[RMDB]
RNA sequence: GGGAACGACUCGAGUAGAGUCGAAAAGGCGUAGCCGACAACAUGCCCAGGUAGCCCAGACCUUCAAGGCUACGGUGCGUUGCGACGCACGGUCUGAUUCUUAACAACGACGUUCACCGCGUCUUCUACAACCGGCAAAGAUUCGUCUUUGCCGGAAGACGAAUGGUUAGUUCGCUAACCAUUCGUCAAAAGAAACAACAACAACAAC
Reactivity to DMS in 0.01 (KOAc 150mM, MgCl2 10mM, bicine 150mM(pH8.5), 24C), signal-to-noise 1, nucleotides 027 to 156: g010g000c000g020u000a150g020c030c010g020a220c070a010a130c010a070u000g030c020c000c110a050g030g000u000a070g000c000c010c180a090g000a120c010c020u020u000c090a100a300g000g000c010u000a050c010g010g000u010g030c010g060u010u020g030c060g070a030c010g000c020a050c000g000g040u080c000u000g000a230u010u000c080u010u010a100a100c060a050a130c000g010a070c010g060u000u010c180a070c070c070g000c050g070u000c010u000u000c010u000a090c130a100a230c000c010g010g000c010a010a040a010g000a080u000u000c300g000u000c000u000u000u000g010c000c020g000g000a000a020
Reactivity to 2A3 in 0.01 (KOAc 150mM, MgCl2 10mM, bicine 150mM(pH8.5), 24C), signal-to-noise 4, nucleotides 027 to 156: g040g000c170g110u120a030g010c010c010g100a020c050a130a050c030a130u210g030c000c020c000a010g000g060u020a020g000c010c070c160a030g000a010c000c010u030u030c020a000a010g000g000c000u010a010c000g010g000u020g000c000g000u000u080g090c190g120a000c010g000c000a000c010g000g010u010c000u000g030a060u180u080c090u140u120a130a080c120a080a050c110g010a000c000g040u200u220c120a100c140c030g010c010g040u010c040u050u020c030u120a100c050a110a050c010c000g000g000c000a010a010a010g010a010u080u080c170g050u030c080u010u020u000g000c000c000g010g000a000a010

Conditions: 150 mM KOAc, 10 mM MgCl2 and 150 mM bicine (pH 8.5), 24 C.
This 207-nucleotide RNA was probed chemically with DMS and 2A3.
DMS adducts were read by reverse transcription with MarathonRT.
For 2A3 the reverse transcriptase was SuperScript II with manganese.